Description:
Chemical mapping of a 207-nucleotide RNA with 2A3. 2A3 adducts were read by reverse transcription with SuperScript II with manganese. It was measured as part of the RMDB library M2RFPK. The 2A3 profile rests on 1,130 reads.
[RMDB]
RNA sequence: GGGAACGACUCGAGUAGAGUCGAAAAAGCCAUACCAUUACGAUGGUAUGGCAAGUCCCUGACGGCGAUGGAUCCCGCCUGGCCGAUGCCGAACUGCCGAUCUGGCUGAUGGUUCCUGCCCCGUCAAAAAACGUAAAGCACUUCGGUGCUUUACGAAGAAUUGAGGACUCUUCGGAGUCCUCAAUUCAAAAGAAACAACAACAACAAC
Reactivity to 2A3 in 0.01 (KOAc 150mM, MgCl2 10mM, bicine 150mM(pH8.5), 24C), signal-to-noise 2, nucleotides 027 to 156: a000g000c020c010a000u000a000c000c000a020u060u060a050c270g150a010u000g000g010u000a000u000g010g000c000a000a020g020u010c000c000c000u000g010a010c000g010g000c130g010a000u010g020g000a010u030c050c040c030g000c010c010u030g000g010c000c060g050a050u090g060c060c050g140a230a150c140u170g040c010c010g090a130u050c050u060g000g010c040u060g050a160u100g000g000u030u010c000c000u020g040c010c000c020c010g000u000c030a250a000a000a000a000a000c010g020u010a000a000a010g020c000a000c020u020u110c240g040g010u010g000c000u000u000u000a000c000g000a010a000